[RMDB]
RNA sequence: GGGAACGACUCGAGUAGAGUCGAAAAGACUGGAAGGUUGGCAGCUUCUGUAAUCACGCUUCUGUGAGGUCCGAUUGUGGGAUGGCCUGAGGCUGGGAUUUACUGCGUAGCGGACCAGCUCAUGUUGACGGAACGUCCGCACUAAGCUUGCCAUCAACGAGUAAAAACACUUCGGUGUUUUUACUCGAAAAGAAACAACAACAACAAC
Reactivity to DMS in 0.01 (KOAc 150mM, MgCl2 10mM, bicine 150mM(pH8.5), 24C), signal-to-noise 1, nucleotides 027 to 156: g000a140c030u000g000g000a070a040g010g030u000u000g040g030c030a240g010c030u000u000c030u000g020u000a050a050u000c000a070c030g030c010u010u000c020u000g020u000g010a060g030g030u000c000c000g020a280u000u000g020u000g030g000g010a080u010g010g010c040c080u000g010a170g020g010c030u010g030g000g020a080u030u000u010a080c030u000g020c130g000u000a110g030c020g000g010a050c000c050a070g030c020u000c030a110u010g070u000u000g000a130c080g000g020a040a120c060g000u010c010c020g000c010a090c080u010a030a180g040c040u000u040g030c010c000a150u000c000a040a180
Reactivity to 2A3 in 0.01 (KOAc 150mM, MgCl2 10mM, bicine 150mM(pH8.5), 24C), signal-to-noise 3, nucleotides 027 to 156: g050a000c050u070g050g070a040a020g100g000u040u040g030g000c000a010g000c000u050u040c030u100g020u010a000a020u040c000a000c010g010c010u140u040c040u160g170u090g120a110g010g010u000c020c030g200a220u110u200g110u150g120g080g000a060u060g100g020c000c030u040g010a010g050g000c040u060g080g070g030a020u070u090u140a070c000u010g080c070g090u060a050g000c010g000g010a020c010c020a030g030c040u020c040a040u180g090u130u160g090a060c080g020g050a120a030c080g020u010c000c000g000c000a010c030u020a020a000g000c020u060u130g000c010c000a020u050c030a010a040
This 207-nucleotide RNA was probed chemically with DMS and 2A3. DMS adducts were read by reverse transcription with MarathonRT. High DMS reactivity at an A or C suggests that its Watson-Crick edge is free. The data come from the RNA Mapping Database (RMDB), library ARCHII.